[RMDB]
RNA sequence: GGGAACGACUCGAGUAGAGUCGAAAAGAUAUGGAUCCUGGCAUCGAUCGUAUCAGUGAAAGUAUCGGAAACGAUACGAGAUACGGGAGCCAGAAUCCUAAGUCAAAGACCAGGUUCGCCUGGUCAAGACAAUACGCGUGUUCGCACGCGUAUUGUCAAAAGAAACAACAACAACAAC
Reactivity to DMS in 0.01 (KOAc 150mM, MgCl2 10mM, bicine 150mM(pH8.5), 24C), signal-to-noise 2, nucleotides 027 to 126: g000a010u000a280u020g000g000a020u010c050c000u010g000g000c020a240u000c110g030a090u020c010g020u000a000u010c000a130g050u010g030a180a170a170g000u000a000u000c010g020g020a070a020a170c000g020a000u000a020c010g020a160g010a040u000a000c000g000g000g010a120g020c000c010a010g000a000a000u000c000c000u030a020a070g000u010c010a060a150a160g010a040c000c000a030g000g040u010u020c260g010c000c000u000g000g000u000c000a010a040
Reactivity to 2A3 in 0.01 (KOAc 150mM, MgCl2 10mM, bicine 150mM(pH8.5), 24C), signal-to-noise 2, nucleotides 027 to 126: g020a010u050a020u110g000g000a000u040c020c000u000g020g040c060a300u150c130g260a130u090c010g010u000a010u000c000a040g090u110g300a260a050a130g000u000a010u010c020g000g010a060a020a010c000g000a000u000a000c020g020a030g010a010u000a000c000g020g050g040a000g000c000c010a000g000a010a010u000c000c000u050a070a010g020u000c050a120a040a040g000a000c000c000a000g000g040u050u090c300g050c090c010u000g170g000u000c000a000a000